[RMDB]
RNA sequence: GGGAACGACUCGAGUAGAGUCGAAAACUACCACCAGCAUUCGCCCACUGGAAACGUGCGCUAGGACGGUGGCCGACUUUAGAUUCAGCUAUUUCCUUGUUGAGGUACGAAUUCCCGACUUGGAAUGCCUCGUAUGUCUUUUCGAAGACAUACGAGGAAAAGAAACAACAACAACAAC
Reactivity to 2A3 in 0.01 (KOAc 150mM, MgCl2 10mM, bicine 150mM(pH8.5), 24C), signal-to-noise 3, nucleotides 027 to 126: c030u040a080c010c010a020c010c010a020g030c000a100u050u110c070g030c030c030c020a010c040u030g090g000a120a060a030c090g020u030g000c020g000c020u020a030g010g070a040c040g010g000u010g010g000c020c010g080a080c030u190u150u100a050g020a130u080u110c000a010g010c010u040a130u020u060u030c010c000u000u000g010u040u060g050a170g010g040u060a050c090g100a100a080u070u010c000c000c000g010a010c000u030u040g020g070a040a030u050g050
Reactivity to DMS in 0.01 (KOAc 150mM, MgCl2 10mM, bicine 150mM(pH8.5), 24C), signal-to-noise 3, nucleotides 027 to 126: c160u000a130c060c010a100c030c070a100g020c100a060u000u020c100g010c030c050c010a080c020u030g010g000a080a080a090c090g020u000g040c200g010c030u000a070g000g000a090c230g010g020u000g000g010c050c090g010a070c140u000u000u000a080g000a180u010u000c070a080g020c050u000a080u010u000u000c010c020u000u000g000u000u010g000a080g010g000u000a300c080g010a080a190u020u000c000c010c010g000a090c190u010u000g000g010a060a060u000g020

Description:
This 177-nucleotide RNA was probed chemically with 2A3 and DMS. As a SHAPE reagent, 2A3 marks flexible, mostly unpaired nucleotides at the ribose 2'-OH. The DMS profile rests on 1,959 reads. For DMS the reverse transcriptase was MarathonRT. Conditions: 150 mM KOAc, 10 mM MgCl2 and 150 mM bicine (pH 8.5), 24 C. The data come from the RNA Mapping Database (RMDB), library OK2TST.